[RMDB]
RNA sequence: GGGAACGACUCGAGUAGAGUCGAAAAAGGAUGCCGAUAAGGGCCUCCGUCAUAAGAUCACAUUCUGCGCCUUAGGAACUGUCUAGAUCCGGCUCGCUCAGUCCCGAGUAAUCGGCGCAAGCAAACCGAUCACACCCUGGUUCGCCAGGGUGUGAUCAAAAGAAACAACAACAACAAC
Reactivity to DMS in 0.01 (KOAc 150mM, MgCl2 10mM, bicine 150mM(pH8.5), 24C), signal-to-noise 1, nucleotides 027 to 126: a110g000g060a040u000g010c000c000g010a220u110a100a300g000g000g000c000c080u000c000c050g000u280c010a130u080a060a140g030a010u000c090a040c050a140u040u000c000u000g000c070g010c000c010u000u000a290g000g050a000a040c080u000g020u010c000u080a010g000a000u010c060c000g000g000c050u000c080g000c130u000c000a210g000u040c070c000c000g000a000g000u000a010a050u000c280g000g000c160g000c150a150a040g000c180a000a050a080c280c010
Reactivity to 2A3 in 0.01 (KOAc 150mM, MgCl2 10mM, bicine 150mM(pH8.5), 24C), signal-to-noise 3, nucleotides 027 to 126: a000g020g030a010u050g000c000c000g030a070u170a270a140g170g020g000c010c020u000c000c000g040u000c010a080u040a240a030g090a050u030c070a000c060a240u150u050c040u040g030c030g040c010c010u080u080a070g060g010a060a070c140u120g080u140c100u170a030g010a110u000c040c000g020g020c010u000c050g050c030u000c060a010g030u000c000c000c000g020a010g030u210a090a100u070c050g010g000c000g000c000a000a000g020c010a030a040a000c040c100